[RMDB]
RNA sequence: GGGAACGACUCGAGUAGAGUCGAAAAGAUAUGGACCAGGGUGUGAGCGACGAAGUCGGAAACGACAGAGCUCCCACCUGGUCCUAAGUCAAACUUUAACGCAGGAGUUCGCUCCUGCGUUAAAGAACGUUAGUCCUUGGUUCGCCAAGGACUAACGAAAAGAAACAACAACAACAAC
Reactivity to 2A3 in 0.01 (KOAc 150mM, MgCl2 10mM, bicine 150mM(pH8.5), 24C), signal-to-noise 1, nucleotides 027 to 126: g020a020u110a030u150g010g000a010c000c000a020g100g230g040u110g010u000g050a000g040c000g300a300c050g010a230a010g000u020c000g000g000a150a020a020c010g010a010c010a030g000a010g020c010u000c000c020c020a010c010c000u000g000g000u010c000c000u000a040a000g020u000c050a000a040a130c010u000u010u010a000a000c030g020c000a000g000g000a000g020u100u170c180g110c100u000c010c040u020g000c010g010u000u000a000a000a000g000a000a000
Reactivity to DMS in 0.01 (KOAc 150mM, MgCl2 10mM, bicine 150mM(pH8.5), 24C), signal-to-noise 1, nucleotides 027 to 126: g000a020u010a300u000g000g000a020c000c000a000g000g030g010u010g000u020g010a020g030c000g010a240c230g000a110a060g000u010c000g020g000a080a070a220c000g010a000c010a050g040a190g000c000u000c000c070c020a000c000c010u010g010g000u010c000c000u000a000a020g000u010c020a150a120a190c000u010u010u000a000a000c000g020c010a000g000g020a000g010u010u010c180g010c000u000c000c000u000g000c000g010u000u000a000a000a000g010a040a140
Structure probing data (2A3 and DMS) for a 177-nucleotide construct. It was measured as part of the RMDB library TTRDEL. For 2A3, 1,814 sequencing reads were counted. For DMS the reverse transcriptase was MarathonRT. The reactions ran in a buffer of 150 mM KOAc, 10 mM MgCl2 and 150 mM bicine (pH 8.5), at 24 C.